RNA sequence: GGGAACGACUCGAGUAGAGUCGAAAAGAUAUGGAUAGUCUCUGGCAACAGCUAUAUGUCGGAAACGACAUGAUAGACAUGCCAACGUGAGACUAUCCUAAGUCAAAGUAGGCCUUCGGGCCUACAAGAGACGGUAUUACUUCGGUAAUACCGUCUCAAAAGAAACAACAACAACAAC
Reactivity to 2A3 in 0.01 (KOAc 150mM, MgCl2 10mM, bicine 150mM(pH8.5), 24C), signal-to-noise 2, nucleotides 027 to 126: g030a020u070a060u210g000g020a000u000a000g000u000c000u000c050u050g010g030c050a110a090c050a300g010c010u010a020u000a010u060g020u000c010g070g000a120a050a070c000g050a000c010a010u080g210a000u050a010g070a090c020a090u100g030c010c010a080a060c180g200u300g030a000g010a000c000u010a010u000c000c000u000a020a010g000u010c010a040a040a080g000u000a000g000g000c000c020u040u120c300g020g010g000c000c000u000a010c000a010a000
Reactivity to DMS in 0.01 (KOAc 150mM, MgCl2 10mM, bicine 150mM(pH8.5), 24C), signal-to-noise 2, nucleotides 027 to 126: g010a050u010a300u010g000g000a000u000a030g000u000c000u010c000u000g000g010c010a010a120c250a170g010c000u000a010u000a020u000g000u000c000g010g000a180a130a210c010g020a000c010a010u000g020a000u000a000g000a040c080a200u010g010c020c020a050a170c300g030u010g040a030g010a030c010u000a000u000c000c000u000a010a090g010u000c040a050a100a140g050u010a010g000g020c000c000u000u010c210g050g000g010c000c000u000a010c000a090a080